[RMDB]
RNA sequence: GGGAACGACUCGAGUAGAGUCGAAAAGAUAUGGAUGAAGUAACUAGAUCCCACCAAGCUUUGAUCUUCCCAUCGGAAACGAUGGUGAAGGGAGCUUGAUGGGAUCUAGUUACUUCAUCCUAAGUCACAUAUUGCAAUCCUUCGGGAUUGCAAUAUGAAAAGAAACAACAACAACAAC
Reactivity to DMS in 0.01 (KOAc 150mM, MgCl2 10mM, bicine 150mM(pH8.5), 24C), signal-to-noise 1, nucleotides 027 to 126: g010a060u020a300u000g010g000a010u010g000a030a000g000u000a000a000c000u010a010g000a000u000c000c000c010a020c010c000a000a010g030c000u000u000u020g020a060u010c000u010u000c000c010c010a020u000c020g000g020a150a110a210c000g010a020u000g010g000u030g030a010a010g010g020g010a010g020c000u010u000g000a000u000g000g000g000a010u000c010u000a000g000u000u000a000c010u000u000c000a000u000c000c010u000a000a040g010u010c080a290

An RNA of 177 nucleotides, treated with DMS and read out base by base.